[RMDB]
RNA sequence: GGGAACGACUCGAGUAGAGUCGAAAAGACGCGUCAUCAGGCGUCCGCGAGACCUGCGAGGUCGGACCUCGUUUCCAUAUUCUCUACCGCAGACGCGUCGCGCACACAGACUCGCAGCCUGAGCCGCAGCUACCCGUAAUUUCGAUUACGGGUAGCUAAAAGAAACAACAACAACAAC
Reactivity to 2A3 in 0.01 (KOAc 150mM, MgCl2 10mM, bicine 150mM(pH8.5), 24C), signal-to-noise 6, nucleotides 027 to 126: g020a010c020g020c010g040u080c020a230u020c030a060g060g000c010g060u040c070c040g010c060g020a030g010a100c020c010u030g030c020g020a020g030g040u120c080g010g210a180c000c000u010c010g010u000u040u020c060c000a080u090a180u240u050c060u030c040u060a130c040c060g090c090a030g010a010c010g000c010g040u020c010g000c020g030c010a070c010a010c000a040g070a170c000u010c020g010c000a010g020c010c000u010g020a030g020c030c060g040c040
Reactivity to DMS in 0.01 (KOAc 150mM, MgCl2 10mM, bicine 150mM(pH8.5), 24C), signal-to-noise 3, nucleotides 027 to 126: g020a050c010g020c000g000u040c000a140u040c110a080g000g040c000g000u020c130c150g030c070g060a140g010a160c110c060u000g000c030g060a120g010g000u000c050g040g040a300c000c000u000c040g000u000u010u000c010c050a130u030a040u000u010c050u000c000u000a140c070c080g070c140a080g000a010c000g010c030g030u010c030g060c180g010c110a060c180a170c020a030g010a090c010u010c010g000c000a170g000c000c020u000g000a040g000c040c120g040c100
The record gives the reactivity of an RNA of 177 nucleotides to 2A3 and DMS. The DMS profile rests on 2,513 reads. Conditions: 150 mM KOAc, 10 mM MgCl2 and 150 mM bicine (pH 8.5), 24 C. For DMS the reverse transcriptase was MarathonRT. For 2A3, 3,964 sequencing reads were counted.